Record summary
This 177-nucleotide RNA was probed chemically with DMS and 2A3. The 2A3 profile rests on 85,513 reads. The data come from the RNA Mapping Database (RMDB), library OK1LIB. DMS adducts were read by reverse transcription with MarathonRT.
[RMDB]
RNA sequence: GGGAACGACUCGAGUAGAGUCGAAAACAAGCGCGUCAGGUGCUCCGGAUGUUUGGAGCCGCUUCGCAAGCGGUGUCUGCGCGUGCGAGGGUGGCCUCCUGUGCGGCCUUACGCUUGCAACCUGGCCUCUAGUGAUGCUGUUCGCGGCGUCGCUAGAAAAAGAAACAACAACAACAAC
Reactivity to DMS in 0.01 (KOAc 150mM, MgCl2 10mM, bicine 150mM(pH8.5), 24C), signal-to-noise 8, nucleotides 027 to 126: c080a080a060g000c050g010c280g010u000c020a010g010g010u010g010c010u010c010c010g010g010a120u040g010u010u030u020g010g010a040g010c000c120g000c060u000u010c170g000c020a030a020g000c000g000g000u010g010u020c030u010g010c000g000c000g010u000g010c120g020a020g010g000g020u000g010g010c020c010u000c000c010u000g000u000g000c010g000g000c030c030u000u030a150c010g010c010u000u000g000c000a090a030c010c000u000g000g010c020c230
Reactivity to 2A3 in 0.01 (KOAc 150mM, MgCl2 10mM, bicine 150mM(pH8.5), 24C), signal-to-noise 9, nucleotides 027 to 126: c040a020a020g050c040g020c030g050u020c010a000g010g000u020g020c000u000c000c000g060g050a170u140g160u170u150u230g030g000a010g000c010c000g010c010u100u080c060g000c020a010a010g000c010g050g050u080g060u080c060u120g020c020g000c030g070u030g030c130g010a010g010g020g050u060g120g160c000c010u000c000c000u010g010u020g010c000g010g010c000c000u010u100a040c010g000c000u020u040g000c010a010a020c000c000u010g020g000c000c000